Structure probing data (DMS and 2A3) for a 177-nucleotide construct. The DMS profile rests on 2,990 reads. Conditions: 150 mM KOAc, 10 mM MgCl2 and 150 mM bicine (pH 8.5), 24 C. DMS adducts were read by reverse transcription with MarathonRT. 2A3 is a SHAPE reagent: it acylates the 2'-hydroxyl of flexible nucleotides of all four kinds. Reactivities are given for positions 27 through 126.
[RMDB]
RNA sequence: GGGAACGACUCGAGUAGAGUCGAAAAAGCUAGGCACGAUCGUACCUCACUAGGACUAGGUACAGUACUAGUAUCAUGAGUCACGCUCUAGCUAGGUGUGAUCUAGCAUGCAUGCUCAUCAUGCUAGCUGUACCCCGUCAUUCGUGACGGGGUACAGAAAAGAAACAACAACAACAAC
Reactivity to DMS in 0.01 (KOAc 150mM, MgCl2 10mM, bicine 150mM(pH8.5), 24C), signal-to-noise 3, nucleotides 027 to 126: a060g000c030u000a020g010g010c030a080c120g000a040u010c100g000u010a060c070c030u000c070a120c050u010a070g010g000a040c060u000a090g010g020u010a090c130a050g000u010a050c030u010a010g020u000a040u000c180a020u000g000a090g010u040c030a120c070g000c030u010c160u020a110g000c010u000a040g000g020u020g010u000g010a080u000c020u000a010g010c000a070u000g020c030a000u000g010c040u000c080a010u000c100a020u010g000c000u000a010g010
Reactivity to 2A3 in 0.01 (KOAc 150mM, MgCl2 10mM, bicine 150mM(pH8.5), 24C), signal-to-noise 3, nucleotides 027 to 126: a000g030c040u040a020g040g020c080a020c120g040a100u150c070g040u060a040c000c020u050c020a060c070u120a060g030g080a050c030u040a020g120g110u110a070c050a060g000u100a040c020u020a010g030u000a040u130c060a050u080g040a000g080u060c020a010c110g020c000u050c040u080a010g020c010u000a020g060g010u100g050u070g090a090u020c010u000a000g030c000a000u010g000c000a000u080g050c010u020c020a020u040c000a000u020g010c000u000a010g000